[RMDB]
Conditions: 150 mM KOAc, 10 mM MgCl2 and 150 mM bicine (pH 8.5), 24 C. This 177-nucleotide RNA was probed chemically with 2A3.

RNA sequence: GGGAACGACUCGAGUAGAGUCGAAAACUCGUGUGCCAAGUGUGAGCGGACGCGAAGCGCUGCGAGCCAGUCGGUCACGUACCGAAGCCCUUCCGAGGGGCAUCCCUGUUGGAGUCGUUUCCGGCCCCAGCUGAUCGGAUUUCGAUCCGAUCAGCUGAAAAGAAACAACAACAACAAC
Reactivity to 2A3 in 0.01 (KOAc 150mM, MgCl2 10mM, bicine 150mM(pH8.5), 24C), signal-to-noise 2, nucleotides 027 to 126: c000u000c000g000u070g020u020g000c000c010a140a030g040u010g010u050g040a030g060c070g020g090a090c000g010c030g040a120a120g040c020g040c050u090g000c000g000a020g020c020c000a020g090u020c000g010g000u000c010a030c290g060u120a000c040c000g020a050a050g010c000c010c010u040u050c160c170g040a100g000g000g040g000c010a010u080c020c000c010u040g020u060u140g020g000a000g000u000c000g000u010u000u010c000c000g000g040c000c010c000

The 2A3 profile rests on 928 reads.
For 2A3 the reverse transcriptase was SuperScript II with manganese.